[RMDB]
RNA sequence: GGGAACGACUCGAGUAGAGUCGAAAAGGAGAUCCAAUCCAUGAUCUAGAAGGAAAUCAAAUCUCUAUUGUCACAUAUCGCCACAAAAACUACUAUGCUCUAAGUGGAAUCGGGUACGAGAGUCUAGACUUGUGCUUGGAAGGAGUAGGGAUUCACCGCCAAUGUUUAAGUUCGCUUAAACAUUGGCAAAAGAAACAACAACAACAAC
Reactivity to 2A3 in 0.01 (KOAc 150mM, MgCl2 10mM, bicine 150mM(pH8.5), 24C), signal-to-noise 4, nucleotides 027 to 156: g060g020a030g000a030u020c010c000a030a050u010c010c020a070u110g050a110u050c070u130a080g040a100a060g120g050a040a140a050u080c060a050a070a040u000c030u000c010u020a070u060u090g100u090c020a030c000a120u100a060u110c100g000c020c030a050c030a030a060a050a110a010c070u140a030c030u080a100u210g040c020u010c010u100a180a000g020u020g020g000a020a020u060c050g020g010g010u050a040c030g010a010g000a000g070u020c020u110a030g040a080c000u020u080g010u040g010c000u020u030g040g010a050a050g010g010a050g010u050a050g010g020g020a050u090u070c060a030c060c040
Reactivity to DMS in 0.01 (KOAc 150mM, MgCl2 10mM, bicine 150mM(pH8.5), 24C), signal-to-noise 2, nucleotides 027 to 156: g000g010a060g010a030u000c050c050a140a120u010c060c030a100u000g000a080u000c050u000a090g000a170a160g000g050a060a100a070u010c070a000a080a120u000c000u000c030u000a040u000u000g010u000c080a090c100a090u010a090u000c050g000c000c010a070c060a050a060a130a090a060c040u000a050c050u000a080u010g040c000u000c040u000a080a100g060u000g010g020a070a080u000c050g020g000g020u000a030c040g000a070g010a110g010u010c060u010a080g000a050c040u020u000g040u000g000c050u000u000g020g020a110a120g000g010a040g000u000a060g000g010g000a130u000u000c060a060c060c190